[RMDB]
The record gives the reactivity of an RNA of 177 nucleotides to 2A3 and DMS. The data come from the RNA Mapping Database (RMDB), library TTRDEL.

RNA sequence: GGGAACGACUCGAGUAGAGUCGAAAAGAUAUGGACCGACACCGAUAAGAUGCGGUCGGAAACGACCGGCAUCUUUUGACGGUGGGGUCCUAAGUCAAAGGUUGUCUAUGUUCGCAUAGACAACCAAUCUACGGAUGAAGUUCGCUUCAUCCGUAGAAAAAGAAACAACAACAACAAC
Reactivity to 2A3 in 0.01 (KOAc 150mM, MgCl2 10mM, bicine 150mM(pH8.5), 24C), signal-to-noise 2, nucleotides 027 to 126: g010a010u080a030u090g000g000a010c020c000g190a160c020a000c000c010g070a080u080a300a060g000a000u010g000c000g010g000u020c010g000g000a090a050a000c000g000a000c020c020g050g080c020a020u030c010u020u030u010u060g050a010c020g000g040u010g010g000g010g000u000c000c000u040a100a010g040u020c040a070a080a110g000g000u000u000g010u010c010u010a010u010g030u010u080c200g010c190a000u000a010g010a010c000a000a000c000c000a000a000
Reactivity to DMS in 0.01 (KOAc 150mM, MgCl2 10mM, bicine 150mM(pH8.5), 24C), signal-to-noise 3, nucleotides 027 to 126: g000a030u000a300u000g000g010a010c010c000g020a190c010a020c000c010g020a160u000a010a010g000a000u000g020c010g010g000u010c000g020g010a050a040a120c000g010a010c000c000g020g020c000a000u000c000u000u000u000u010g010a170c050g010g020u010g010g010g020g000u010c000c000u000a000a090g010u000c030a080a130a150g010g010u000u000g010u000c000u000a000u000g000u000u000c230g020c000a020u000a000g000a010c000a000a010c000c000a030a010

Annotation: Reactivities are rounded to 0.1 and cut off at 0 and 3. The DMS profile rests on 3,498 reads. Conditions: 150 mM KOAc, 10 mM MgCl2 and 150 mM bicine (pH 8.5), 24 C.